[RMDB]
RNA sequence: GGGAACGACUCGAGUAGAGUCGAAAACGGAGACUGUUCGCAGUCUCCGAAAGGAGCGCCCUUUUGCGCUAAGGCCAUACGGACAGCCGGCUCCAAAGCCGAAAAUCCGGCGGUUCGCCGCCGGAAAUCAUACCGAUAUGUUCGCAUAUCGGUAUGAAAAAGAAACAACAACAACAAC
Reactivity to 2A3 in 0.01 (KOAc 150mM, MgCl2 10mM, bicine 150mM(pH8.5), 24C), signal-to-noise 3, nucleotides 027 to 126: c000g020g010a000g010a000c010u030g050u100u130c260g020c120a000g000u000c000u010c000c010g010a010a000a000g030g010a020g010c020g060c020c020c000u090u100u090u170g050c050g000c060u090a120a130g010g000c000c000a030u040a050c020g000g000a010c010a010g020c010c020g050g000c020u000c020c020a050a030a020g000c010c000g010a100a010a000a020u010c000c000g010g000c020g020g010u010u040c200g020c060c010g010c040c000g000g010a020a000a000
Reactivity to DMS in 0.01 (KOAc 150mM, MgCl2 10mM, bicine 150mM(pH8.5), 24C), signal-to-noise 3, nucleotides 027 to 126: c020g030g010a030g000a030c000u010g010u000u010c200g030c000a020g010u000c000u000c010c000g000a010a040a090g000g020a050g020c030g010c020c050c060u000u000u000u000g000c070g010c050u010a050a070g020g010c010c010a040u000a070c030g000g000a010c050a130g010c000c010g000g000c000u000c020c050a110a090a170g000c000c020g000a230a060a080a100u000c000c000g010g010c010g000g020u000u010c190g010c000c000g010c010c010g010g000a000a010a010
Structure probing data (2A3 and DMS) for a 177-nucleotide construct. The data come from the RNA Mapping Database (RMDB), library M2PK50. Values cover nucleotides 27 to 126. The reactions ran in a buffer of 150 mM KOAc, 10 mM MgCl2 and 150 mM bicine (pH 8.5), at 24 C. For 2A3, 5,399 sequencing reads were counted. The DMS profile rests on 3,390 reads.